[RMDB]
RNA sequence: GGGAACGACUCGAGUAGAGUCGAAAACCUGCGGAACUGCUGGCCCCUUAUACCGGUGAUAUCGCCGCUGAAGGAAUCAGCAAAGCCAUGCGCGGAGGCGCAAAGUUCCUGCAUCACGGCAUUAAGCCUACCAAGCGUCUUUCGAGACGCUUGGUAGAAAAGAAACAACAACAACAAC
Reactivity to DMS in 0.01 (KOAc 150mM, MgCl2 10mM, bicine 150mM(pH8.5), 24C), signal-to-noise 2, nucleotides 027 to 126: c000c010u010g010c030g000g000a050a000c000u000g040c020u000g000g000c210c030c000c000u000u000a080u080a060c300c000g000g000u000g030a280u050a060u010c090g020c020c020g080c220u000g000a060a050g050g000a010a060u000c010a000g000c080a070a070a160g000c000c090a070u000g000c000g030c000g000g000a140g000g020c000g000c000a000a000a120g000u000u000c000c000u030g000c030a090u000c080a120c160g000g010c020a070u070u070a080a120g040c110
Reactivity to 2A3 in 0.01 (KOAc 150mM, MgCl2 10mM, bicine 150mM(pH8.5), 24C), signal-to-noise 3, nucleotides 027 to 126: c000c000u020g000c020g010g000a000a000c000u020g000c000u010g000g030c000c000c030c000u020u080a110u040a140c030c000g000g030u040g110a300u110a100u300c050g000c000c000g000c040u040g050a000a010g030g010a040a030u090c000a000g010c000a000a000a040g050c020c030a040u040g000c010g000c010g030g190a100g180g000c000g000c010a000a060a000g010u000u000c000c040u060g010c000a010u120c040a020c070g000g000c000a010u140u190a100a040g030c010
The record gives the reactivity of an RNA of 177 nucleotides to DMS and 2A3. The DMS profile rests on 1,944 reads. It was measured as part of the RMDB library RFM100. The RNA was probed in 150 mM KOAc, 10 mM MgCl2 and 150 mM bicine (pH 8.5) at 24 C. For DMS the reverse transcriptase was MarathonRT. Values are in units of 0.01, from 0 to 300, in steps of 10.